[RMDB]
RNA sequence: GGGAACGACUCGAGUAGAGUCGAAAAUAGUAGAUAGGGGUGGAAGAUGACAGCUUUCCCGCAGCCCACCCUGUUAAGUGGUUAACCACGAUUAAUGUCAUCAAAAUAAAAUGGGACCCAAAACAAAGUGCAACAUAAGUUUCGACUUAUGUUGCACAAAAGAAACAACAACAACAAC
Reactivity to DMS in 0.01 (KOAc 150mM, MgCl2 10mM, bicine 150mM(pH8.5), 24C), signal-to-noise 1, nucleotides 027 to 126: u000a140g000u000a080g030a120u020a040g050g000g000g020u000g000g010a210a190g010a080u000g040a000c000a040g030c010u000u030u000c010c060c000g020c290a050g000c010c010c000a000c000c000c000u000g010u020u020a050a190g000u000g000g000u000u000a130a180c000c000a010c030g000a070u010u030a020a050u000g010u030c010a030u000c010a110a040a090a110u000a060a050a080a130u010g000g000g000a050c000c040c000a030a080a090a110c260a120a100a140

Chemical mapping of a 177-nucleotide RNA with DMS. Conditions: 150 mM KOAc, 10 mM MgCl2 and 150 mM bicine (pH 8.5), 24 C.